[RMDB]
RNA sequence: GGGAACGACUCGAGUAGAGUCGAAAAAUCUUAUCUGUACUCUAAGCUUACUGAUGGUCCUUGCAUCCGGGUCUUGGUCUUUGGGUCUCGACAACGCUUCUCAAGCUGUGGAGCACGCCUUAGCGACACGCUAUGUCCCAUUCGUGGGACAUAGCGUAAAAGAAACAACAACAACAAC
Reactivity to 2A3 in 0.01 (KOAc 150mM, MgCl2 10mM, bicine 150mM(pH8.5), 24C), signal-to-noise 1, nucleotides 027 to 126: a000u030c050u070u050a010u090c050u060g060u070a060c020u030c020u080a000a120g070c010u060u110a050c010u070g080a060u060g070g030u060c040c020u010u090g030c000a030u020c000c020g050g020g010u040c000u020u070g070g010u050c010u100u040u050g090g000g040u000c010u010c020g040a050c000a170a020c040g000c050u080u000c010u030c040a040a040g030c030u020g090u070g060g000a030g060c030a010c000g000c020c020u060u070a040g010c000g070a000c000
Reactivity to DMS in 0.01 (KOAc 150mM, MgCl2 10mM, bicine 150mM(pH8.5), 24C), signal-to-noise 2, nucleotides 027 to 126: a090u000c030u010u010a120u000c070u020g020u000a070c070u000c040u010a140a130g010c050u020u000a080c090u000g000a080u010g000g000u010c020c020u010u010g030c090a110u000c040c090g000g000g000u010c030u010u010g010g000u000c010u000u000u010g010g010g000u010c020u000c010g000a040c090a020a090c120g000c030u010u010c040u000c130a080a050g030c080u010g040u010g020g000a140g010c060a080c090g030c040c040u000u000a070g040c090g020a110c100